[RMDB]
RNA sequence: GGGAACGACUCGAGUAGAGUCGAAAAGGCGAAGAAUCUGGCGGCCUGUCUUCACGCGGACACAUUCCUGAACGGGACGGCCUGCUCAACAGCCUCCUGAUGAUCGAAGCGGUGGCGGCGAGCGGUCAUCCAUAGCCAAUUUCGAUUGGCUAUGGAUAAAAGAAACAACAACAACAAC
Reactivity to 2A3 in 0.01 (KOAc 150mM, MgCl2 10mM, bicine 150mM(pH8.5), 24C), signal-to-noise 4, nucleotides 027 to 126: g030g000c030g030a070a000g050a070a160u070c050u110g030g020c020g020g020c010c030u030g010u000c020u080u080c040a050c050g050c030g030g030a020c030a000c000a200u070u050c000c010u030g050a100a020c080g010g000g020a010c020g010g010c000c030u040g000c020u010c020a040a100c010a030g010c000c000u020c000c000u110g050a140u070g020a030u140c080g020a080a010g060c030g020g030u020g030g010c000g000g020c010g020a030g010c010g010g000u030c020
Reactivity to DMS in 0.01 (KOAc 150mM, MgCl2 10mM, bicine 150mM(pH8.5), 24C), signal-to-noise 7, nucleotides 027 to 126: g020g000c030g000a090a070g010a090a080u000c060u000g010g010c050g010g010c030c010u000g010u000c030u000u010c070a100c130g020c120g000g010a060c110a070c140a120u010u000c020c010u000g010a110a140c130g000g000g010a060c090g010g010c040c010u010g020c020u000c060a050a260c090a140g010c010c010u000c020c010u000g010a090u000g010a090u000c130g000a100a120g000c110g010g000u000g000g000c020g010g000c180g000a030g010c030g000g000u000c090